[RMDB]
RNA sequence: GGGAACGACUCGAGUAGAGUCGAAAAUCAACUGACGGUCCCAACGUCGUCGCCCACGACAACGUCUCACCCGUCUGAUGUGGUGGUGACUAGUGAACCGCCUCAGACGUCGUCGUCGCCAUCGUCGGCUCACAGUAGCAAGUCUGCUGCUGAUCGCUCCCCUAAGGGAAUUCGUUCCCUUAGGGGAAAAAGAAACAACAACAACAAC
Reactivity to 2A3 in 0.01 (KOAc 150mM, MgCl2 10mM, bicine 150mM(pH8.5), 24C), signal-to-noise 3, nucleotides 027 to 156: u080c000a050a130c100u120g020a000c000g020g030u020c000c010c020a020a010c040g000u020c000g060u070c050g050c000c030c060a090c040g010a010c020a030a010c030g050u040c020u080c070a070c020c030c030g020u030c060u030g050a080u070g050u060g030g000u040g000g050u040g090a070c060u050a070g130u010g300a040a020c000c010g030c010c010u030c030a030g010a050c020g000u060c020g010u020c000g000u000c010g080c030c030a100u060c060g030u010c020g000g000c000u010c010a130c000a020g010u030a000g020c020a070a080g280u170c160u110g000c000u010g030c020u010g020a100u140c070g010c030
Reactivity to DMS in 0.01 (KOAc 150mM, MgCl2 10mM, bicine 150mM(pH8.5), 24C), signal-to-noise 1, nucleotides 027 to 156: u000c090a040a100c060u000g000a060c040g050g000u060c020c010c080a190a060c060g030u000c050g000u020c040g020c080c080c160a170c000g010a050c040a110a050c030g000u020c060u020c030a100c070c050c030g000u000c020u030g010a060u000g010u000g020g000u000g000g000u000g080a300c180u020a060g010u010g030a130a020c000c010g040c000c000u000c050a040g000a030c000g040u000c040g020u010c040g040u000c010g020c020c040a070u030c050g030u000c040g010g000c020u000c040a120c040a130g000u010a080g080c020a090a120g040u020c100u000g030c010u000g000c040u010g000a110u000c010g010c250